[RMDB]
The record gives the reactivity of an RNA of 207 nucleotides to 2A3.
Source: RMDB library ARCHII, as collected in RNAgym.
Reactivities are given for positions 27 through 156.
The 2A3 profile rests on 399 reads.
The RNA was probed in 150 mM KOAc, 10 mM MgCl2 and 150 mM bicine (pH 8.5) at 24 C.

RNA sequence: GGGAACGACUCGAGUAGAGUCGAAAAGUAUGAAUAAAGGAUCCAUGGAUGAAGAUAGAAAGUUGAUUUCUAAUCGUAACUAAAUCUUCAAUUUCUUAUUUGUAAAGAAGAAAUUGAAGCAAAAUAGCUAUUAAACGAUGACUUUGGUUUACUAGAGCGAAGGAAUACCGUUCGCGGUAUUCCUUCGAAAAGAAACAACAACAACAAC
Reactivity to 2A3 in 0.01 (KOAc 150mM, MgCl2 10mM, bicine 150mM(pH8.5), 24C), signal-to-noise 1, nucleotides 027 to 156: g010u010a000u030g000a040a000u030a100a030a020g040g000a040u000c030c000a180u010g000g000a040u010g070a090a020g010a030u040a030g050a040a040a000g030u090u070g090a300u040u020u000c000u010a090a120u070c030g080u120a040a020c010u010a000a000a050u010c000u010u000c000a000a030u000u010u020c000u080u060a230u160u160u150g180u200a240a200a030g110a000a000g000a000a080a000u000u000g000a010a000g000c010a000a000a000a140u040a000g000c030u030a000u040u140a210a170a000c000g020a040u040g010a010c030u000u000u040g010g040u140u160u120a070c050u120a000g010a000g050